RNA sequence: GGGAACGACUCGAGUAGAGUCGAAAAGAUAUGGACCGAGGCAUGAACUACAACGUAACUCUCGGAAACGAGAGGAGAAGUUGCAUGCCGUUUGACGUCCUAAGUCGGAUCAGCCUUCGGGCUGAAACUGAAGCAAACGUUUCGACGUUUGCUUCAGAAAAGAAACAACAACAACAAC
Reactivity to DMS in 0.01 (KOAc 150mM, MgCl2 10mM, bicine 150mM(pH8.5), 24C), signal-to-noise 2, nucleotides 027 to 126: g000a070u000a300u020g020g010a020c010c060g000a050g000g000c000a010u000g000a080a040c150u020a300c010a000a010c000g010u020a070a250c000u000c000u000c000g010g000a060a060a110c020g010a000g000a000g000g000a060g010a050a150g000u000u000g030c000a020u000g000c000c000g000u000u020u010g020a100c300g000u000c000c030u010a000a090g000u000c010g010g000a190u000c000a010g000c000c000u000u030c220g010g000g010c010u000g020a000a030a130
Background:
Structure probing data (DMS) for a 177-nucleotide construct. The RNA was probed in 150 mM KOAc, 10 mM MgCl2 and 150 mM bicine (pH 8.5) at 24 C.